Background
Chemical mapping of a 207-nucleotide RNA with DMS and 2A3. Reactivities are rounded to 0.1 and cut off at 0 and 3. As a SHAPE reagent, 2A3 marks flexible, mostly unpaired nucleotides at the ribose 2'-OH.

[RMDB]
RNA sequence: GGGAACGACUCGAGUAGAGUCGAAAAAUGAACUUGCUAAUCCUAGUGUCUCCACUGAUGAUUGUUAUGUGGUAGUGUCAAUGCGAGCUGGACCAGACUUCGAAGUUGCUUGUCCUACUUCUAGACCAAUGGCACGCUUGCGUUUCAUGACUAAUAGUAAAACGGCAUGUUUCGACAUGCCGUUUUAAAAAGAAACAACAACAACAAC
Reactivity to DMS in 0.01 (KOAc 150mM, MgCl2 10mM, bicine 150mM(pH8.5), 24C), signal-to-noise 2, nucleotides 027 to 156: a070u020g020a050a060c100u000u010g040c060u000a060a170u010c040c020u000a090g040u010g000u000c000u000c020c020a190c050u000g040a040u000g010a110u010u010g000u020u020a040u010g050u000g030g030u020a030g010u000g040u040c060a020a070u000g040c000g010a080g020c030u000g030g000a300c040c030a140g000a070c070u000u000c070g020a030a210g000u020u000g030c060u010u000g000u000c070c040u000a060c020u000u000c030u010a160g060a110c080c050a050a240u000g010g000c020a210c140g020c030u000u000g020c020g030u000u000u000c020a100u000g010a270c070u010a030a110u010a120g010
Reactivity to 2A3 in 0.01 (KOAc 150mM, MgCl2 10mM, bicine 150mM(pH8.5), 24C), signal-to-noise 1, nucleotides 027 to 156: a000u190g000a050a000c110u160u160g030c000u070a060a020u080c000c060u050a040g000u000g040u070c030u060c030c040a020c040u030g030a050u020g080a170u140u120g070u020u120a060u180g010u000g010g070u050a090g010u000g010u060c070a070a110u020g040c040g020a000g000c020u060g000g010a080c000c000a030g010a030c000u090u100c080g030a120a020g040u130u090g020c070u080u130g020u080c010c000u050a070c000u030u000c000u020a090g000a090c000c020a140a280u040g000g020c010a000c020g000c000u020u070g010c030g000u000u010u040c060a000u060g040a030c060u100a160a100u150a140g160